RNA sequence: GGGAACGACUCGAGUAGAGUCGAAAAUUUGUGAACAACAUUCCACUCUAUCAUUUAGUAGGUAUGCAGAAGCGUACUACAGUACAAGGUCCCCCAGGCAGUGGUAUAUCACAUUUUGCUAUAGGCCCAUAGGAAAGAGUUUCGACUCUUUCCUAUGAAAAGAAACAACAACAACAAC
Reactivity to 2A3 in 0.01 (KOAc 150mM, MgCl2 10mM, bicine 150mM(pH8.5), 24C), signal-to-noise 7, nucleotides 027 to 126: u030u020u050g010u010g030a080a040c030a030a020c010a100u110u000c010c000a020c020u030c020u060a140u110c050a160u070u170u140a050g020u010a030g090g100u020a010u030g010c020a020g060a300a060g130c000g010u010a000c000u010a020c030a030g080u080a070c040a150a090g110g040u090c000c010c000c000c010a000g030g000c010a000g020u010g010g010u030a050u010a010u060c020a020c010a030u060u060u030u030g030c020u050a030u020a240g110g030c040c030
Reactivity to DMS in 0.01 (KOAc 150mM, MgCl2 10mM, bicine 150mM(pH8.5), 24C), signal-to-noise 9, nucleotides 027 to 126: u010u000u010g020u000g000a050a100c140a120a110c110a190u010u000c020c010a050c030u000c050u000a090u010c120a080u010u010u010a110g020u000a030g010g010u000a010u000g020c020a160g010a100a120g020c020g030u000a010c010u000a020c040a120g010u000a070c150a070a100g010g010u000c010c020c010c030c040a100g010g010c140a040g020u000g000g000u000a070u010a100u000c030a030c020a050u000u000u000u000g010c090u000a100u000a110g010g010c040c050